RNA sequence: GGGAACGACUCGAGUAGAGUCGAAAAUAGAGUCUUUAGCUAAAGUAACUAAGCUUGAUGUUAAAUCUACUGCACCAGCUUAUGUUUUAGCUCGUGACGUGGAGUGUCAAUCUGAUGCUAUAGUUGCCCAUACCCUACGCUUCGGCGUAGGGUAUGGAAAAGAAACAACAACAACAAC
Reactivity to 2A3 in 0.01 (KOAc 150mM, MgCl2 10mM, bicine 150mM(pH8.5), 24C), signal-to-noise 2, nucleotides 027 to 126: u130a010g090a000g050u010c030u100u080u050a000g010c030u030a090a040a020g030u010a010a100c030u000a020a000g000c020u050u060g000a120u000g130u100u130a070a050a060u100c040u050a050c010u100g000c020a000c010c020a000g020c020u070u050a050u160g120u010u210u070u020a000g000c000u000c000g010u010g000a020c040g010u020g040g030a030g000u040g020u000c030a030a070u010c060u120g000a060u040g000c030u030a040u030a110g050u060u060g030c000
Reactivity to DMS in 0.01 (KOAc 150mM, MgCl2 10mM, bicine 150mM(pH8.5), 24C), signal-to-noise 1, nucleotides 027 to 126: u030a100g000a230g020u000c020u000u000u000a070g000c020u010a020a030a080g000u010a050a060c080u000a010a030g000c010u020u000g020a030u000g030u000u000a020a090a140u010c100u000a060c120u010g000c020a000c000c040a030g010c000u010u000a040u000g000u000u000u000u000a020g000c010u010c300g010u000g000a020c050g000u000g010g010a010g010u000g010u000c090a040a070u010c100u000g000a060u000g010c010u010a020u000a040g000u010u000g010c090